[RMDB]
Conditions: 150 mM KOAc, 10 mM MgCl2 and 150 mM bicine (pH 8.5), 24 C. An RNA of 207 nucleotides, treated with 2A3 and DMS and read out base by base. It was measured as part of the RMDB library OK3TST.

RNA sequence: GGGAACGACUCGAGUAGAGUCGAAAAUUGGUUAAGGCAUCAAUGGGCUUAUAGUUUUAGUGUACAGAGAGAAGGCCAAAGAUCAAGCUCAUCACAGUUCUGAAUUCUCUUGCCAUUUGCAUUAUUAGCUCAACAAAUAUUUGAGUGCUUAAUUACACCUAGUGCAUGCAUUCGUGCAUGCACUAGGAAAAGAAACAACAACAACAAC
Reactivity to 2A3 in 0.01 (KOAc 150mM, MgCl2 10mM, bicine 150mM(pH8.5), 24C), signal-to-noise 3, nucleotides 027 to 156: u080u080g030g010u040u050a060a060g020g010c000a040u010c010a030a040u040g020g000g000c050u060u030a040u030a080g040u030u050u070u060a070g000u000g070u070a080c100a030g040a010g010a000g010a040a050g040g050c060c040a090a050a010g030a020u040c050a050a030g010c060u040c030a060u070c040a060c020a080g020u090u020c040u040g070a090a080u050u040c030u000c000u000u030g040c000c010a050u020u000u130g030c000a010u010u070a020u020u050a080g010c000u000c010a000a060c020a030a140a040u100a090u060u130u040g040a040g040u030g000c000u030u080a080a020u120u180a020c010a040
Reactivity to DMS in 0.01 (KOAc 150mM, MgCl2 10mM, bicine 150mM(pH8.5), 24C), signal-to-noise 2, nucleotides 027 to 156: u000u000g000g000u000u020a100a120g000g010c030a090u000c050a080a090u000g010g010g010c010u000u010a040u000a110g040u000u000u000u000a000g030u000g020u010a100c100a170g000a110g000a070g020a110a120g040g010c100c060a040a110a070g020a120u000c060a080a120g000c020u000c060a030u020c030a120c070a100g010u010u000c050u000g010a060a120u000u000c010u000c020u000u010g000c040c020a060u010u000u010g000c100a020u000u000a030u000u000a130g000c020u000c020a050a200c080a020a090a100u000a210u010u010u000g020a110g020u000g020c030u000u000a050a120u000u000a080c070a190
The DMS profile rests on 2,277 reads.